Structure probing data (2A3 and DMS) for a 177-nucleotide construct. The RNA was probed in 150 mM KOAc, 10 mM MgCl2 and 150 mM bicine (pH 8.5) at 24 C.

RNA sequence: GGGAACGACUCGAGUAGAGUCGAAAACAUCAUGAAUCCGCUGCUGGCGCUCGCCGCCGGAACGGAUGAUCCACGCGCCGCCGGCUGCUCUGGCUCGAUGCACUUGGAGGAGCAGAGGUACUGCAGCCGAUCACCCUCGAUUCGUCGAGGGUGAUCGAAAAGAAACAACAACAACAAC
Reactivity to 2A3 in 0.01 (KOAc 150mM, MgCl2 10mM, bicine 150mM(pH8.5), 24C), signal-to-noise 2, nucleotides 027 to 126: c040a090u260c070a100u180g130a060a030u010c010c040g040c020u120g040c020u010g180g000c010g030c040u150c090g170c210c050g000c000c000g110g010a060a010c020g020g000a020u040g000a020u000c030c020a020c060g030c010g010c030c000g020c010c010g180g000c010u020g000c000u000c000u050g030g050c000u020c030g110a160u160g090c070a010c110u110u090g000g030a060g000g020a010g080c010a000g000a020g040g000u000a030c000u070g000c020a030g010c030
Reactivity to DMS in 0.01 (KOAc 150mM, MgCl2 10mM, bicine 150mM(pH8.5), 24C), signal-to-noise 1, nucleotides 027 to 126: c140a140u070c140a140u030g000a130a040u000c040c000g000c150u000g000c010u000g010g000c040g000c020u000c300g040c000c070g000c000c030g040g000a090a200c020g030g000a000u020g030a110u040c000c020a210c100g000c070g000c070c000g010c020c010g040g030c050u000g000c000u000c020u000g000g000c070u010c030g010a140u000g000c020a090c090u000u080g020g000a230g040g000a120g000c000a010g020a250g040g010u090a130c090u020g000c040a080g000c090
Values cover nucleotides 27 to 126.